Chemical mapping of a 207-nucleotide RNA with 2A3 and DMS. DMS (dimethyl sulfate) methylates the pairing face of unpaired adenines and cytosines. The reactions ran in a buffer of 150 mM KOAc, 10 mM MgCl2 and 150 mM bicine (pH 8.5), at 24 C. Reactivities are given for positions 27 through 156. The DMS profile rests on 7,876 reads. It was measured as part of the RMDB library M2RFPK.
RNA sequence: GGGAACGACUCGAGUAGAGUCGAAAAAAAGGCGCGGUUGCCGAUCGGUAUGGAUGCCACCGUGACGGCUCAAUCACACAAGUGCCAACGAUAACGAGGCGCUCGCUAUUGCUGCGUAACUGACGGCUAGAUACAGCCAGGUUCGCCUGGCUGUAAACAAGUAGAUUGAGUUCGCUCAAUCUACUUGAAAAGAAACAACAACAACAAC
Reactivity to 2A3 in 0.01 (KOAc 150mM, MgCl2 10mM, bicine 150mM(pH8.5), 24C), signal-to-noise 7, nucleotides 027 to 156: a000a000a010g060g000c030g000c020g020g030u080u050g010c020c020g020a070u050c020g000g050u100a070u110g090g060a070u120g050c030c020a020c000c010g010u030g070a060c020g010g020c020u020c050a070a070u120c020a030c020a020c010a140a040g020u010g020c010c000a060a030c060g050a080u080a170a070c070g010a040g060g010c030g010c040u020c030g010c030u060a060u140u200g020c040u030g000c020g020u050a080a060c020u040g070a030c020g030g010c040u050a030g010a100u050a030c000a000g000c000c000a000g030g000u020u030c110g040c050c000u000g000g000c000u000g000u000a000a010a000
Reactivity to DMS in 0.01 (KOAc 150mM, MgCl2 10mM, bicine 150mM(pH8.5), 24C), signal-to-noise 3, nucleotides 027 to 156: a050a070a070g000g000c000g050c050g020g020u000u000g000c010c010g000a110u000c030g040g000u000a090u000g010g000a150u000g020c060c030a080c000c010g030u010g000a280c080g010g030c050u000c080a070a090u000c030a080c060a070c060a060a060g050u000g000c020c020a020a070c030g000a110u000a050a110c030g010a190g000g030c050g020c030u000c040g030c010u000a030u000u000g020c000u000g000c030g000u000a060a100c050u010g010a110c080g010g000c040u000a100g000a300u000a020c000a020g010c000c000a010g010g000u000u000c300g040c020c020u000g000g000c010u000g000u000a000a070a120